[RMDB]
RNA sequence: GGGAACGACUCGAGUAGAGUCGAAAAAGGCACAGUCAGACGGAAACCCAUCGACUGUCACCAGAUGCUGCAUCACCUGAUCACUGAUGGCUCAACGGUAUCCGGCGGUACAACUGAAUACUUGUAGCCAAAUACGUCACUUCGGUGACGUAUUUGGAAAAGAAACAACAACAACAAC
Reactivity to 2A3 in 0.01 (KOAc 150mM, MgCl2 10mM, bicine 150mM(pH8.5), 24C), signal-to-noise 1, nucleotides 027 to 126: a000g120g000c070a000c000a030g010u010c040a020g040a020c000g000g030a060a100a160c010c000c000a000u000c000g040a040c010u000g000u000c000a030c030c000a040g010a100u070g000c040u080g000c030a010u010c000a060c000c030u040g000a020u020c030a000c030u020g030a030u070g080g000c030u040c000a050a070c040g020g000u030a030u040c010c020g010g060c050g040g000u090a030c030a050a020c090u100g010a050a050u040a180c020u060u040g050u140a000g040
Reactivity to DMS in 0.01 (KOAc 150mM, MgCl2 10mM, bicine 150mM(pH8.5), 24C), signal-to-noise 1, nucleotides 027 to 126: a040g040g000c130a000c000a040g000u000c020a110g010a070c080g020g000a170a060a150c220c010c010a170u000c020g010a090c020u000g020u000c030a060c020c010a110g000a120u000g000c060u030g010c020a050u000c040a060c010c020u000g020a020u020c100a100c110u030g020a060u000g010g020c050u000c110a080a220c050g010g030u000a030u000c000c060g000g030c040g020g000u000a020c100a060a010c030u000g010a040a080u000a030c100u000u000g020u010a010g000